The record gives the reactivity of an RNA of 177 nucleotides to DMS and 2A3.
Reactivities are given for positions 27 through 126.
The RNA was probed in 150 mM KOAc, 10 mM MgCl2 and 150 mM bicine (pH 8.5) at 24 C.
For DMS the reverse transcriptase was MarathonRT.
It was measured as part of the RMDB library TTRDEL.

RNA sequence: GGGAACGACUCGAGUAGAGUCGAAAAGAUAUGGAUGGCGUGUCUGGCUAUGAAGUCGGAAACGAUGGAGCCACACGACCAUCCUAAGUCAAACCUUAGCCAUAAUGUUCGCAUUAUGGCUAAGGAAGGUGAUCAUAACGUUCGCGUUAUGAUCACCAAAAGAAACAACAACAACAAC
Reactivity to DMS in 0.01 (KOAc 150mM, MgCl2 10mM, bicine 150mM(pH8.5), 24C), signal-to-noise 2, nucleotides 027 to 126: g020a020u010a300u000g030g010a020u000g030g000c000g010u000g000u010c140u000g000g000c010u000a250u000g030a150a130g000u000c030g000g020a160a110a160c000g000a020u000g010g010a010g010c030c000a020c010a030c020g000a110c020c000a000u010c000c000u000a010a060g000u000c020a130a110a130c000c000u010u000a010g000c000c000a020u000a000a010u000g000u000u020c270g010c010a000u000u030a010u010g000g010c000u060a000a010g000g000a010a010
Reactivity to 2A3 in 0.01 (KOAc 150mM, MgCl2 10mM, bicine 150mM(pH8.5), 24C), signal-to-noise 2, nucleotides 027 to 126: g030a010u060a020u190g010g000a000u020g000g000c000g020u020g050u130c160u110g010g000c000u050a300u300g030a040a000g030u000c030g000g030a060a090a040c020g000a010u030g000g000a010g000c000c000a020c010a010c020g030a020c010c010a000u000c000c000u000a020a000g010u000c020a060a020a150c000c000u000u020a000g000c020c000a000u010a000a000u010g050u070u110c270g010c170a000u000u030a010u030g000g050c000u000a000a010g000g010a010a020